Structure probing data (2A3 and DMS) for a 177-nucleotide construct.
Source: RMDB library OK1LIB, as collected in RNAgym.
For 2A3, 9,571 sequencing reads were counted.
For 2A3 the reverse transcriptase was SuperScript II with manganese.
The reactions ran in a buffer of 150 mM KOAc, 10 mM MgCl2 and 150 mM bicine (pH 8.5), at 24 C.
RNA sequence: GGGAACGACUCGAGUAGAGUCGAAAAGCCAGGUGCGUAGCGAGGACUUGCCCGCGAAGCCCUCAUAGGCCUUCCAGGCCCGCAGCAGCGUCUCCUGAACAAGGUCUUCCGCGUCGUGCAGCGAGCCCGUCAUCCUAUCAUUCGUGAUAGGAUGACGAAAAGAAACAACAACAACAAC
Reactivity to 2A3 in 0.01 (KOAc 150mM, MgCl2 10mM, bicine 150mM(pH8.5), 24C), signal-to-noise 7, nucleotides 027 to 126: g030c000c020a020g020g020u160g040c040g050u070a010g030c010g040a250g040g040a160c070u130u170g140c050c010c000g020c020g030a030a010g000c010c000c010u040c010a100u170a040g020g000c000c010u050u050c050c010a010g010g020c000c010c000g000c020a100g000c000a020g010c010g030u000c020u030c040c010u040g030a070a040c060a130a060g010g000u020c000u080u030c040c020g010c010g040u060c030g060u060g020c020a020g030c020g030a020g010c000c010
Reactivity to DMS in 0.01 (KOAc 150mM, MgCl2 10mM, bicine 150mM(pH8.5), 24C), signal-to-noise 4, nucleotides 027 to 126: g000c000c040a080g010g000u010g010c020g000u020a250g010c080g030a080g030g000a140c220u000u000g000c030c000c020g000c030g030a080a300g010c030c010c030u040c090a140u000a120g000g000c000c030u030u000c080c030a050g000g030c110c050c030g010c030a070g010c080a090g000c020g030u000c130u020c010c020u010g000a070a100c150a080a050g010g000u010c060u010u020c030c090g000c010g000u010c040g000u020g000c010a100g020c060g010a090g060c020c000